[RMDB]
RNA sequence: GGGAACGACUCGAGUAGAGUCGAAAAAGGCGACAUCUCCAAGUUCUGGGGAGUGGUGGUUGACCGUUCACACGGUCCGUCGCGACGACCCGGGGCCAGUUCUAGUGGACUGGUCCAGAGACUAAGCGGGGGUGGGCGAUUCCAGUUAAGAGGAACGGGUUUAUAUAGUGUUCGCACUAUAUAAACCAAAAGAAACAACAACAACAAC
Reactivity to DMS in 0.01 (KOAc 150mM, MgCl2 10mM, bicine 150mM(pH8.5), 24C), signal-to-noise 1, nucleotides 027 to 156: a100g020g000c010g010a130c020a040u020c020u000c030c020a070a140g010u000u000c120u010g060g030g030g040a300g010u000g020g010u000g000g010u000u000g000a050c010c000g070u010u000c250a140c190a180c070g000g010u010c010c030g020u000c000g040c060g040a090c020g000a300c010c000c010g020g020g010g010c000c000a020g030u010u000c010u010a230g000u000g030g010a000c000u000g000g010u010c020c000a010g000a140g010a120c080u000a120a170g000c150g000g000g000g120g060u000g010g010g060c040g000a150u020u010c020c050a140g000u000u010a140a130g010a180g000g000a040a010c100g000
Reactivity to 2A3 in 0.01 (KOAc 150mM, MgCl2 10mM, bicine 150mM(pH8.5), 24C), signal-to-noise 1, nucleotides 027 to 156: a000g120g000c040g030a050c010a020u000c010u010c030c020a020a070g000u090u000c080u200g010g000g000g010a040g010u010g020g010u020g000g000u040u030g010a020c010c000g030u170u250c140a100c030a000c110g010g000u040c000c010g000u010c030g000c020g050a000c000g020a000c000c000c000g000g030g000g000c000c010a010g000u000u020c080u160a140g060u270g240g020a000c000u000g000g000u000c000c000a010g010a000g010a000c050u110a100a070g130c040g030g010g010g000g000u030g010g040g040c000g040a000u050u000c000c020a020g000u070u130a100a080g070a060g100g000a030a030c090g020